About this RNA
An RNA of 177 nucleotides, treated with 2A3 and read out base by base. Conditions: 150 mM KOAc, 10 mM MgCl2 and 150 mM bicine (pH 8.5), 24 C.

[RMDB]
RNA sequence: GGGAACGACUCGAGUAGAGUCGAAAAGCCUAUCUGUCCGGUCAUGUCCGCGACAAGCUCAAGGUCGCGGAAGCUGCGGCAGGGCUCGAUCCCGCCUAUGAGCGUAACGUCUCCGCGCUCACAGCCGCCACGGGAUCCUGUUCGCAGGAUCCCGUGGAAAAGAAACAACAACAACAAC
Reactivity to 2A3 in 0.01 (KOAc 150mM, MgCl2 10mM, bicine 150mM(pH8.5), 24C), signal-to-noise 3, nucleotides 027 to 126: g000c010c000u090a170u210c010u000g040u010c000c040g020g030u090c060a210u200g050u020c000c000g010c000g000a010c030a050a050g070c020u130c300a140a090g120g000u000c020g000c000g000g010a000a000g000c030u030g010c090g000g000c010a010g000g000g000c010u010c000g050a060u030c000c000c020g000c000c000u010a040u070g000a000g010c010g020u010a050a130c070g160u090c060u000c040c070g000c000g010c000u020c010a000c010a000g110c100c070g030

The data come from the RNA Mapping Database (RMDB), library OK1LIB. Reactivities are given for positions 27 through 126.